[RMDB]
RNA sequence: GGGAACGACUCGAGUAGAGUCGAAAAGAAAUGGCGUGCCGCGUAGUCACGGGCGGCACGCAAAGUGCAUUUAUAAGAACCCGUACAUCGCGGCGAAGAUCCAGCCGAAGACGCACGAUACGAUCACACCUGCCCAUUACUUCGGUAAUGGGCAGGUAAAAGAAACAACAACAACAAC
Reactivity to 2A3 in 0.01 (KOAc 150mM, MgCl2 10mM, bicine 150mM(pH8.5), 24C), signal-to-noise 1, nucleotides 027 to 126: g130a000a000a010u060g060g010c000g000u010g000c000c000g000c040g050u180a000g030u080c050a000c020g070g050g000c000g000g010c000a000c000g030c000a010a020a010g020u100g100c030a030u000u190u170a180u160a240a000g070a150a240c010c000c000g020u030a010c030a030u100c000g000c000g000g020c030g050a100a000g000a010u070c150c000a000g050c030c000g000a000a000g040a000c000g020c040a010c040g000a020u000a190c130g000a010u250c010a060c000